[RMDB]
RNA sequence: GGGAACGACUCGAGUAGAGUCGAAAACUACAUAGUUUCGACUAUGUAGAAACCAUUAGGUAGCAUGCAGAUGCAUAUGGACGAGGGCAACUAACCUAUUGCGAACAGCAGGUUUCGACCUGCUGAAGUUGAGUUCAAUCUUCGGAUUGAACUCAACAAAAGAAACAACAACAACAAC
Reactivity to DMS in 0.01 (KOAc 150mM, MgCl2 10mM, bicine 150mM(pH8.5), 24C), signal-to-noise 2, nucleotides 027 to 126: c010u000a000c010a030u000a000g000u000u000u010c220g010a020c000u000a000u000g000u000a010g000a110a090a170c040c000a130u010u000a080g010g020u000a040g000c020a050u000g010c110a040g010a060u000g040c060a080u000a090u000g000g000a050c120g000a080g000g020g010c020a060a080c090u010a050a060c030c050u000a110u000u000g000c100g010a090a250c010a010g000c000a000g000g010u000u000u000c120g000a000c010c010u000g010c000u000g010a010a080
Reactivity to 2A3 in 0.01 (KOAc 150mM, MgCl2 10mM, bicine 150mM(pH8.5), 24C), signal-to-noise 2, nucleotides 027 to 126: c000u010a000c000a000u010a000g030u000u020u130c190g080a020c000u000a010u010g000u000a000g020a040a000a000c000c000a070u030u100a030g000g050u020a020g040c050a040u090g020c020a010g030a190u080g110c030a050u060a100u160g090g010a020c080g030a100g000g010g010c020a050a040c040u050a040a070c040c010u070a100u120u150g080c030g040a070a040c000a000g000c020a000g000g040u000u010u140c130g040a040c000c000u030g000c000u000g000a000a000